[RMDB]
RNA sequence: GGGAACGACUCGAGUAGAGUCGAAAAAAGGUCGCCGAGCUGACCGCCGAUCUGCAACGCGUGCAGGCCGACUUCGCCAACUACCGUAAGCGGGCGUUGCGCGAUCAGCAGGCGGCCGCUGACCGAGGCAUAACAAUCCCUUCGGGGAUUGUUAUGCAAAAGAAACAACAACAACAAC
Reactivity to DMS in 0.01 (KOAc 150mM, MgCl2 10mM, bicine 150mM(pH8.5), 24C), signal-to-noise 2, nucleotides 027 to 126: a040a080g000g030u000c000g000c000c000g000a030g030c000u000g000a020c300c020g000c000c090g030a060u060c000u000g000c000a000a000c250g030c240g030u040g000c010a030g000g050c000c020g000a230c130u010u010c010g030c080c020a040a110c110u000a100c060c100g010u030a050a090g000c300g000g000g010c030g000u000u000g010c300g000c000g000a000u000c000a000g010c030a300g000g000c000g000g000c000c000g030c080u000g050a150c000c000g020a170g040
Reactivity to 2A3 in 0.01 (KOAc 150mM, MgCl2 10mM, bicine 150mM(pH8.5), 24C), signal-to-noise 4, nucleotides 027 to 126: a000a030g020g000u020c010g030c010c010g020a070g000c010u020g010a020c020c000g070c070c000g050a120u030c020u080g010c000a040a050c060g050c060g300u040g000c020a060g010g010c010c000g070a130c040u080u050c040g010c020c010a040a040c040u170a080c090c110g120u090a090a060g040c030g030g010g010c020g010u000u030g000c000g000c020g050a060u010c000a000g000c000a010g020g020c000g010g000c000c010g000c040u030g030a030c000c010g020a150g160